[RMDB]
RNA sequence: GGGAACGACUCGAGUAGAGUCGAAAAUCAAGACGCCUCUCCAACCAUUGCCAUGCACGUCUUUGAAGCAAAAAAUACCGCUAAUAACUUCAAUGCCUUCUUGAGAGUCUCCAUAUGGGAAAAACAGAUCAUGAAACCAAUCACAAUCCGCAGCGCCUCAAGUGGAGGAAUUCGUUCCUCCACUUGAAAAAGAAACAACAACAACAAC
Reactivity to 2A3 in 0.01 (KOAc 150mM, MgCl2 10mM, bicine 150mM(pH8.5), 24C), signal-to-noise 2, nucleotides 027 to 156: u080c010a020a000g050a040c000g030c020c000u020c010u000c030c040a050a070c020c030a080u040u120g000c020c020a030u080g030c040a050c060g100u010c040u030u040u050g020a030a020g040c070a030a030a000a040a090a030u130a120c050c050g000c040u070a080a060u110a120a110c030u020u020c050a020a070u060g040c000c010u020u070c020u020u070g020a030g010a020g030u010c000u000c010c010a040u050a100u140g070g000g000a070a080a010a010a010c010a040g020a050u100c020a020u140g040a050a040a030c010c000a040a000u070c020a020c040a100a050u000c010c030g020c020a030g050c040g040c040c040
Reactivity to DMS in 0.01 (KOAc 150mM, MgCl2 10mM, bicine 150mM(pH8.5), 24C), signal-to-noise 1, nucleotides 027 to 156: u010c040a060a060g030a100c010g020c030c030u010c000u000c040c010a060a140c040c050a160u010u000g030c030c040a100u010g000c080a070c080g020u000c040u000u000u010g030a150a090g030c020a010a000a160a020a070a080u000a120c040c030g010c030u000a100a070u000a050a100c010u000u010c040a020a070u000g000c000c000u000u000c030u000u000g000a160g010a130g000u000c050u000c010c030a060u010a060u050g000g000g000a040a040a110a020a130c030a090g030a050u010c030a050u010g010a060a100a030c080c090a050a150u010c000a050c030a070a050u010c000c010g000c010a080g000c050g050c050c080